[RMDB]
RNA sequence: GGGAACGACUCGAGUAGAGUCGAAAAGCUACAAGGAUAGUGUGUUUUAUGUUGUAAAGAAUAGUACAGCUUUUCCAUUUGAAACACUUUCAGCAUGUCGUGCGUAUUUGGAUUCACGCACGACACAAAACAGGUAUCUUCGGAUACCUGAAAAGAAACAACAACAACAAC
Reactivity to DMS in 0.01 (KOAc 150mM, MgCl2 10mM, bicine 150mM(pH8.5), 24C), signal-to-noise 9, nucleotides 027 to 129: g010c000u020a000c140a170a150g000g000a030u040a070g030u000g020u030g010u000u000u000u000a020u040g030u030u030g030u020a010a040a080g020a100a070u020a040g050u050a040c160a080g000c050u010u000u030u020c050c020a120u000u030u050g000a090a060a030c100a010c070u000u030u020c030a060g040c140a140u000g010u010c010g000u020g020c040g050u040a060u020u060u030g000g050a130u000u060c150a000c000g000c020a010c000g000a020c030a020c140a020a040a070a110
Reactivity to 2A3 in 0.01 (KOAc 150mM, MgCl2 10mM, bicine 150mM(pH8.5), 24C), signal-to-noise 9, nucleotides 027 to 129: g030c020u070a030c060a150a080g150g010a130u090a070g100u070g040u000g070u050u010u050u050a140u080g080u070u010g050u090a040a030a050g060a070a080u070a140g120u070a050c050a050g040c000u030u000u030u010c020c000a040u020u050u180g060a030a030a010c060a000c000u030u160u130c070a070g020c060a080u080g020u000c000g010u000g010c000g020u030a150u050u180u200g290g060a140u110u160c080a000c000g000c000a000c000g000a000c000a000c010a000a030a010a000
Annotation: Source: RMDB library 15KLIB, as collected in RNAgym. The record gives the reactivity of an RNA of 170 nucleotides to DMS and 2A3. Conditions: 150 mM KOAc, 10 mM MgCl2 and 150 mM bicine (pH 8.5), 24 C. For DMS the reverse transcriptase was MarathonRT.